[RMDB]
RNA sequence: GGGAACGACUCGAGUAGAGUCGAAAAGAGAUUGGUGACUAGACUCGUAACACGACUGUUGAGCAGUCUAGUCCAACAAUUCGAAGACAUAAGUUGAUUCGCGAGGAUUCAACGCGGGAGAAUAAGCACAUCGAAGCAUAUUCGUAUGCUUCGAUGUAAAAGAAACAACAACAACAAC
Reactivity to DMS in 0.01 (KOAc 150mM, MgCl2 10mM, bicine 150mM(pH8.5), 24C), signal-to-noise 5, nucleotides 027 to 126: g010a150g010a040u000u000g000g000u040g020a030c000u000a000g000a020c010u010c070g010u040a060a040c050a050c300g040a200c260u020g010u000u010g020a180g000c050a010g000u000c000u000a000g000u000c020c060a040a130c020a010a010u000u010c040g030a180a070g010a090c190a110u030a100a100g010u010u000g000a070u000u000c010g000c160g000a110g000g000a040u000u020c060a020a020c010g000c100g000g000g010a130g010a080a060u020a070a090g000c180
Reactivity to 2A3 in 0.01 (KOAc 150mM, MgCl2 10mM, bicine 150mM(pH8.5), 24C), signal-to-noise 8, nucleotides 027 to 126: g090a000g040a020u030u040g030g030u210g040a010c000u000a000g010a010c000u030c100g120u220a210a010c060a010c070g300a160c150u210g070u110u050g080a030g040c030a000g010u000c000u000a000g010u000c000c000a040a040c000a000a020u120u130c040g070a080a020g070a040c080a090u260a120a070g000u000u020g010a050u010u030c020g000c040g100a080g160g040a080u100u070c060a060a030c030g000c060g060g060g000a130g050a070a140u180a140a030g050c060
This 177-nucleotide RNA was probed chemically with DMS and 2A3. For 2A3, 6,142 sequencing reads were counted. The RNA was probed in 150 mM KOAc, 10 mM MgCl2 and 150 mM bicine (pH 8.5) at 24 C.